[RMDB]
RNA sequence: GGGAACGACUCGAGUAGAGUCGAAAAGAUGCCACCAUCAACGAUGUCGUGCUGGCCAUGUGCGGCGGGGCGUUACGUGCGUACCUGAUCAGCCGGGGAGCGUUACCGGGUGCGCCGCUGAUAGCGAUAUGUCCUAACGAUUCGUCGUUAGGACAUAAAAAGAAACAACAACAACAAC
Reactivity to 2A3 in 0.01 (KOAc 150mM, MgCl2 10mM, bicine 150mM(pH8.5), 24C), signal-to-noise 4, nucleotides 027 to 126: g120a010u170g040c010c020a060c040c020a080u100c050a030a090c050g080a060u100g050u110c080g060u090g030c030u050g090g060c030c000a080u090g020u080g010c000g010g010c000g000g020g010g000c030g030u070u070a050c070g030u100g080c000g010u010a090c000c000u060g020a100u080c050a030g040c040c010g020g000g040g050a130g030c030g030u030u060a030c050c020g020g000g000u010g010c050g020c000c020g000c020u060g060a130u080a050g030c030g030a010
Reactivity to DMS in 0.01 (KOAc 150mM, MgCl2 10mM, bicine 150mM(pH8.5), 24C), signal-to-noise 3, nucleotides 027 to 126: g000a100u000g010c010c010a110c060c030a100u010c080a060a110c110g010a080u000g010u000c040g030u000g000c040u000g020g020c060c050a040u010g010u000g010c030g000g010c020g010g010g000g010c040g030u000u000a050c110g020u010g010c020g020u000a060c020c020u000g000a060u000c120a130g020c040c030g000g000g010g000a130g010c060g020u000u000a090c080c030g000g000g010u000g000c050g000c010c010g020c070u000g000a120u000a080g000c060g000a180
Structure probing data (2A3 and DMS) for a 177-nucleotide construct.
Reactivities are rounded to 0.1 and cut off at 0 and 3.
The RNA was probed in 150 mM KOAc, 10 mM MgCl2 and 150 mM bicine (pH 8.5) at 24 C.
Source: RMDB library OK2TRN, as collected in RNAgym.
For DMS, 5,355 sequencing reads were counted.